This 207-nucleotide RNA was probed chemically with DMS and 2A3.
Source: RMDB library OK3TST, as collected in RNAgym.
The DMS profile rests on 6,244 reads.
RNA sequence: GGGAACGACUCGAGUAGAGUCGAAAAACAGGCAGAGAGGAUACACAGAAAGAAGGAGUAGGGGAAUACUGCGCGUUGUUGAACGCUAUUAGAUCGACCUCGGUGGUCCCCGACGAUGUAUUGCUCGGGAGAAAGGUAUUUACUGACUUGAAUAUUGCAAUGCUUGGUUAUUCGUAACCAAGCAUUGAAAAGAAACAACAACAACAAC
Reactivity to DMS in 0.01 (KOAc 150mM, MgCl2 10mM, bicine 150mM(pH8.5), 24C), signal-to-noise 3, nucleotides 027 to 156: a070c090a100g010g030c010a080g000a120g020a060g010g020a170u000a080c070a110c060a130g010a070a090a070g010a070a070g010g010a100g030u000a060g010g010g010g010a080a100u000a090c070u000g020c060g030c060g020u000u000g010u000u000g010a080a070c080g030c060u010a070u010u000a110g020a080u000c000g010a060c030c000u010c040g010g020u000g000g010u000c010c010c010c000g020a060c020g030a100u000g000u000a080u010u000g020c060u000c020g000g010g010a090g000a040a060a040g010g010u000a070u000u000u000a140c060u010g010a090c040u010u000g010a060a100u000a110u000u000g010
Reactivity to 2A3 in 0.01 (KOAc 150mM, MgCl2 10mM, bicine 150mM(pH8.5), 24C), signal-to-noise 4, nucleotides 027 to 156: a000c040a010g040g000c030a000g020a010g010a000g020g020a020u050a070c070a010c010a030g140a080a070a010g060a030a010g030g010a020g020u060a050g000g000g000g080a020a050u100a120c040u110g040c030g010c000g070u020u040g040u030u050g080a100a020c010g000c030u020a120u090u130a060g080a090u050c060g010a020c000c000u020c030g050g030u050g020g020u010c020c010c010c000g010a010c030g040a030u190g060u200a120u100u220g020c040u010c020g020g030g000a070g050a050a070a010g030g000u050a050u080u140u040a090c050u020g080a050c000u040u070g040a120a040u210a080u100u170g040
For 2A3 the reverse transcriptase was SuperScript II with manganese. For 2A3, 2,678 sequencing reads were counted.